[RMDB]
RNA sequence: GGGAACGACUCGAGUAGAGUCGAAAAGAUAUGGAUGUGCGAAGGGAGUUGUCAUCGGAAACGAUGAUACAACGAAGAACUUCCACAUCCUAAGUCAAAACCACGAAGCGCUUCGGCGCUUCGUGGACUGGUGUGUUAUGUUCGCAUAACACACCAGAAAAGAAACAACAACAACAAC
Reactivity to DMS in 0.01 (KOAc 150mM, MgCl2 10mM, bicine 150mM(pH8.5), 24C), signal-to-noise 1, nucleotides 027 to 126: g010a020u000a060u010g000g010a000u000g000u000g010c300g020a030a000g010g000g040a190g020u000u000g010u000c000a020u010c000g000g000a040a000a030c000g040a010u000g010a210u010a060c030a010a030c000g000a130a180g010a110a300c000u000u030c000c000a020c000a000u000c000c000u000a000a010g000u000c000a090a120a100a230c000c010a010c030g000a030a010g000c000g040c000u000u020c300g030g000c050g020c000u000u000c010g000u000g000g010a040
Reactivity to 2A3 in 0.01 (KOAc 150mM, MgCl2 10mM, bicine 150mM(pH8.5), 24C), signal-to-noise 1, nucleotides 027 to 126: g000a000u020a020u090g000g000a010u000g060u020g090c260g080a020a000g080g050g030a260g030u030u000g000u000c000a000u010c000g000g040a000a010a000c010g000a000u000g000a000u030a140c000a000a000c040g150a190a140g070a130a000c010u000u020c000c020a000c000a000u000c000c000u010a020a000g010u020c040a030a000a090a110c000c010a000c040g000a010a000g040c000g020c120u160u300c300g110g000c010g000c000u010u010c010g010u000g000g000a070
Structure probing data (DMS and 2A3) for a 177-nucleotide construct. For 2A3 the reverse transcriptase was SuperScript II with manganese. Reactivities are rounded to 0.1 and cut off at 0 and 3. Conditions: 150 mM KOAc, 10 mM MgCl2 and 150 mM bicine (pH 8.5), 24 C.